[RMDB]
RNA sequence: GGGAACGACUCGAGUAGAGUCGAAAAAACGCUAGCCGGCGCGCAACCGAGAAGCCGCGACCGUAGCGGUCGGCCAGCAGCGACGGCCACAGCCGUGCCAGGUCACGCGAAUCCAGCAGUUCGGCGGAAGAGGCGUGAAUUUCGAUUCACGCCUCUUAAAAGAAACAACAACAACAAC
Reactivity to DMS in 0.01 (KOAc 150mM, MgCl2 10mM, bicine 150mM(pH8.5), 24C), signal-to-noise 1, nucleotides 027 to 126: a050a050c030g010c030u010a130g030c020c010g000g000c020g000c020g030c030a040a200c070c030g000a220g020a110a250g000c020c020g050c050g050a180c140c070g060u010a160g000c050g070g000u000c050g000g010c030c020a070g050c040a110g000c020g000a040c060g020g000c020c140a020c090a130g000c060c030g000u000g000c090c090a170g000g000u000c030a060c070g020c050g000a150a060u010c140c000a090g000c100a060g050u000u000c080g010g020c040g000g000